[RMDB]
RNA sequence: GGGAACGACUCGAGUAGAGUCGAAAACUACGAUGCUUCGGCAUCGUAGAAAGAAAACUCAAGACGUAUGCGCUGAAAAACGUCUUGAGACAGCGCAAAGAAAAACUUGGUUCUUCGGAACCAAGAAGUAGUUAUACGGGUUCGCCCGUAUAACUACAAAAGAAACAACAACAACAAC
Reactivity to DMS in 0.01 (KOAc 150mM, MgCl2 10mM, bicine 150mM(pH8.5), 24C), signal-to-noise 2, nucleotides 027 to 126: c010u000a000c010g010a030u000g020c000u000u000c180g040g040c000a000u000c000g010u000a000g000a100a070a050g000a100a050a170a230c000u000c010a010a010g000a040c010g010u010a070u010g010c070g010c050u000g030a060a090a080a070a030c000g010u000c000u020u010g000a040g010a080c160a050g010c070g040c030a090a120a120g000a090a040a040a100a130c010u000u000g010g000u000u000c000u000u000c200g010g000a010a000c000c000a000a000g000a020a070
Reactivity to 2A3 in 0.01 (KOAc 150mM, MgCl2 10mM, bicine 150mM(pH8.5), 24C), signal-to-noise 2, nucleotides 027 to 126: c000u000a000c000g000a010u000g000c010u040u090c210g160g010c010a010u000c000g010u010a000g000a000a020a000g000a000a040a020a010c000u010c000a000a000g000a010c000g040u050a060u230g040c090g000c080u120g040a080a040a010a020a000c010g010u010c000u000u000g000a000g000a010c000a010g070c030g030c020a040a090a100g120a040a130a030a010a010c010u010u010g000g010u000u000c000u030u050c210g080g000a000a000c010c020a000a000g000a000a000